Notes:
An RNA of 207 nucleotides, treated with DMS and 2A3 and read out base by base. Values cover nucleotides 27 to 156. The RNA was probed in 150 mM KOAc, 10 mM MgCl2 and 150 mM bicine (pH 8.5) at 24 C. It was measured as part of the RMDB library M2RFPK. The DMS profile rests on 5,382 reads. DMS adducts were read by reverse transcription with MarathonRT.

[RMDB]
RNA sequence: GGGAACGACUCGAGUAGAGUCGAAAACUGCGCUGAGCCCUUCUCCCCCAGCUUGCCUGUGUCCUAGGGAAUUGGAAGGUCAUCCUUCACAGGAUCGUGUGGAAGUCCUGCUCGGGGCGGACGCAUUAUAAACCUUAGACGUUCGCGUCUAAGGUAACACCAAACUGUAGUUCGCUACAGUUUGGUGAAAAGAAACAACAACAACAAC
Reactivity to DMS in 0.01 (KOAc 150mM, MgCl2 10mM, bicine 150mM(pH8.5), 24C), signal-to-noise 2, nucleotides 027 to 156: c030u000g010c030g060c020u010g000a090g010c030c030c020u000u000c050u000c020c010c010c010c030a150g010c060u000u020g020c070c020u000g010u010g010u000c040c040u020a160g010g010g030a070a170u000u010g010g010a060a070g010g010u010c060a090u010c010c010u000u010c090a090c050a040g030g000a030u000c040g000u000g020u000g020g000a150a110g040u000c010c030u000g010c000u030c100g000g020g000g030c000g020g020a210c040g010c010a070u010u000a140u010a090a080a110c000c010u000u000a010g010a050c000g020u000u000c300g030c040g020u010c000u010a000a000g050g010u000a000a060
Reactivity to 2A3 in 0.01 (KOAc 150mM, MgCl2 10mM, bicine 150mM(pH8.5), 24C), signal-to-noise 3, nucleotides 027 to 156: c020u060g000c070g000c090u180g070a100g040c020c010c050u220u130c120u130c050c020c010c020c010a020g010c010u040u070g070c020c000u070g000u010g010u110c040c020u030a040g000g000g070a050a050u110u160g070g000a030a030g040g000u140c060a080u180c020c000u070u050c060a020c010a080g060g000a040u100c040g050u080g040u050g110g020a070a050g000u020c000c010u050g000c070u050c060g000g000g010g000c010g000g020a060c040g000c050a010u040u100a090u180a070a110a010c000c000u000u000a000g000a000c000g010u010u050c170g030c000g090u000c000u000a000a000g010g000u010a000a010